[RMDB]
RNA sequence: GGGAACGACUCGAGUAGAGUCGAAAAUUGGCACAGAUUAUGACAAUAUUGUUCGAAAUGUGAAACAAUUGAUUGAGGAUGAUGAAGCGUAUCAACGUAUGAGUCAAGCGAAUAAUCCAUAUGGUGACUCAUUCGAUACAUUCGUGUAUCGAAUGAGAAAAGAAACAACAACAACAAC
Reactivity to DMS in 0.01 (KOAc 150mM, MgCl2 10mM, bicine 150mM(pH8.5), 24C), signal-to-noise 6, nucleotides 027 to 126: u000u000g000g000c020a010c030a040g000a130u050u010a080u020g000a030c020a080a180u050a120u030u030g000u030u020c050g000a070a110a090u010g020u010g020a080a060a070c020a030a020u000u000g020a090u030u000g010a120g000g010a090u010g000a040u010g010a130a110g000c040g000u030a090u030c160a070a070c050g030u010a050u010g000a180g000u000c020a030a040g000c090g000a080a060u010a050a040u020c030c020a080u020a090u020g010g010u020g000a130
Reactivity to 2A3 in 0.01 (KOAc 150mM, MgCl2 10mM, bicine 150mM(pH8.5), 24C), signal-to-noise 7, nucleotides 027 to 126: u070u040g100g020c000a010c000a010g080a060u060u100a120u240g050a020c000a020a110u180a140u300u170g040u050u050c040g040a040a100a080u120g050u050g060a120a030a000c000a010a020u030u100g040a070u050u120g040a070g130g000a050u050g010a020u060g030a100a020g010c000g020u080a100u250c060a080a040c050g030u070a160u110g030a030g010u020c020a030a040g040c050g080a060a030u060a100a040u000c050c010a010u050a070u190g160g020u080g040a030

Notes
Chemical mapping of a 177-nucleotide RNA with DMS and 2A3. For 2A3 the reverse transcriptase was SuperScript II with manganese. For 2A3, 6,664 sequencing reads were counted. The reactions ran in a buffer of 150 mM KOAc, 10 mM MgCl2 and 150 mM bicine (pH 8.5), at 24 C. Source: RMDB library OK1LIB, as collected in RNAgym.